[RMDB]
Conditions: 150 mM KOAc, 10 mM MgCl2 and 150 mM bicine (pH 8.5), 24 C. The record gives the reactivity of an RNA of 177 nucleotides to 2A3 and DMS. It was measured as part of the RMDB library OK2TRN.

RNA sequence: GGGAACGACUCGAGUAGAGUCGAAAAGAGUCCCCCUGGACUACACUGGCGAUGCUGUCAACGCAAGGAACUUCCUCCAGGUUCUUGCCGGAAAGAAGGCGCCCAAGGUGAUUGGAUCAUCCGGGAACCUCCAUAUACAAUUCGUUGUAUAUGGAGGAAAAGAAACAACAACAACAAC
Reactivity to 2A3 in 0.01 (KOAc 150mM, MgCl2 10mM, bicine 150mM(pH8.5), 24C), signal-to-noise 6, nucleotides 027 to 126: g100a030g160u020c000c000c000c010c010u020g000g030a020c020u080a020c070a010c050u060g020g000c040g050a070u070g080c040u040g110u300c030a040a020c020g010c030a030a020g110g030a060a040c010u120u060c020c050u020c020c020a020g010g000u010u010c000u010u040g020c010c000g030g010a070a060a050g060a020a030g030g000c010g010c000c050c010a050a020g080g020u040g030a200u100u190g070g010a060u100c020a030u020c050c010g010g020g010a060a080
Reactivity to DMS in 0.01 (KOAc 150mM, MgCl2 10mM, bicine 150mM(pH8.5), 24C), signal-to-noise 9, nucleotides 027 to 126: g010a270g010u000c010c010c020c040c030u000g000g010a050c060u000a080c050a050c030u010g010g010c040g000a060u000g010c030u000g000u000c030a080a180c300g000c020a030a030g020g010a030a020c020u000u000c060c030u010c070c060a130g000g010u000u000c020u000u000g000c030c040g010g000a080a110a060g000a080a070g000g000c020g010c010c010c280a110a090g010g010u000g000a120u000u000g010g010a300u000c130a140u000c010c010g000g000g010a130a150
For 2A3, 14,178 sequencing reads were counted.
Reactivities are given for positions 27 through 126.
2A3 adducts were read by reverse transcription with SuperScript II with manganese.